[RMDB]
RNA sequence: GGGAACGACUCGAGUAGAGUCGAAAAACUAAGCUAUGUUUCGAAAGAUCAUAGUGGCCGGGGUAAUGACCUAGGGUAUAGUAAAAGCGAGCGUGUUUGUGCCAAUAGAUUAUCCGCAUCCAAGUCCCUAAAGUAUGGCAUGCUCCGGCAUGGCAUUGUAUCGGAGAAAGUUCGCUUUCUCCGAUACAAAAGAAACAACAACAACAAC
Reactivity to 2A3 in 0.01 (KOAc 150mM, MgCl2 10mM, bicine 150mM(pH8.5), 24C), signal-to-noise 1, nucleotides 027 to 156: a000c020u070a100a020g040c000u000a000u020g010u000u060u060c010g040a140a020a000g000a000u010c000a000u020a000g050u080g090g000c000c040g000g060g000g030u180a290a150u010g090a270c000c000u040a010g040g000g000u070a050u020a230g100u150a010a160a090a000g020c040g000a040g000c110g000u010g000u130u030u090g050u050g000c000c010a130a010u140a070g090a020u050u030a010u180c000c010g060c050a070u070c090c000a060a020g060u040c010c000c000u140a140a170a000g230u120a140u150g000g040c000a000u000g000c020u050c000c030g000g020c000a010u000g000g000c010a000u000u010
An RNA of 207 nucleotides, treated with 2A3 and read out base by base.